RNA sequence: GGGAACGACUCGAGUAGAGUCGAAAACCUUCAGAAGAUUUUAUAAAGCACGUCCGCACUAAUGGUGGUUACAAUUCUUGGCAUUUAGUCGAGGGUGAACUAUUGGUGCAAGACUUACGCUUAAAUACCUCAAAAUAAUGUUCGCAUUAUUUUGAGGAAAAGAAACAACAACAACAAC
Reactivity to DMS in 0.01 (KOAc 150mM, MgCl2 10mM, bicine 150mM(pH8.5), 24C), signal-to-noise 2, nucleotides 027 to 126: c010c000u000u000c140a160g010a140a120g010a100u000u010u010u000a100u030a120a100a020g030c010a120c200g020u010c000c170g020c000a020c010u000a000a020u000g000g010u000g020g000u010u020a090c140a050a040u000u030c000u000u000g030g000c000a200u000u010u000a070g020u000c000g010a000g000g000g010u000g000a140a000c000u000a000u000u000g000g000u000g020c010a060a110g000a030c000u000u010a070c200g000c010u000u000a040a090a120u000a150
Reactivity to 2A3 in 0.01 (KOAc 150mM, MgCl2 10mM, bicine 150mM(pH8.5), 24C), signal-to-noise 3, nucleotides 027 to 126: c000c000u090u110c080a120g070a220a010g010a090u080u110u080u110a210u140a100a060a000g010c010a000c040g000u000c010c020g010c000a000c000u000a020a010u030g020g020u030g010g080u090u100a050c090a110a060u040u020c000u010u000g010g000c010a080u140u110u300a030g000u000c010g000a010g000g010g000u010g000a010a000c000u020a010u000u020g000g000u000g000c000a010a010g000a010c000u010u070a020c010g000c010u010u020a040a060a020u060a050

This 177-nucleotide RNA was probed chemically with DMS and 2A3.
For 2A3, 3,498 sequencing reads were counted.
The reactions ran in a buffer of 150 mM KOAc, 10 mM MgCl2 and 150 mM bicine (pH 8.5), at 24 C.
For 2A3 the reverse transcriptase was SuperScript II with manganese.